An RNA of 177 nucleotides, treated with DMS and read out base by base. Reactivities are given for positions 27 through 126. Conditions: 150 mM KOAc, 10 mM MgCl2 and 150 mM bicine (pH 8.5), 24 C. DMS adducts were read by reverse transcription with MarathonRT.
[RMDB]
RNA sequence: GGGAACGACUCGAGUAGAGUCGAAAAGAUAUGGACGGUAUAUGAUCGAUAAGCUAAUAUCGGAAACGAUAUGUAGCUUUUGACGAUCAUAUACCGUCCUAAGUCAAAAGACGCCUUCGGGCGUCAAUCUACUUCCAAUGUUCGCAUUGGAAGUAGAAAAAGAAACAACAACAACAAC
Reactivity to DMS in 0.01 (KOAc 150mM, MgCl2 10mM, bicine 150mM(pH8.5), 24C), signal-to-noise 4, nucleotides 027 to 126: g010a050u000a300u010g000g000a000c000g000g000u000a000u000a010u000g010a000u010c000g000a140u000a000a010g020c000u000a030a020u000a000u010c010g010g000a160a100a280c010g010a020u000a010u010g000u010a000g010c000u000u000u010u010g010a230c100g000a000u000c000a000u000a000u000a000c010c000g020u000c000c000u000a010a090g000u010c040a100a070a170a130g010a020c020g020c000c000u000u000c270g020g010g020c000g020u000c010a020a080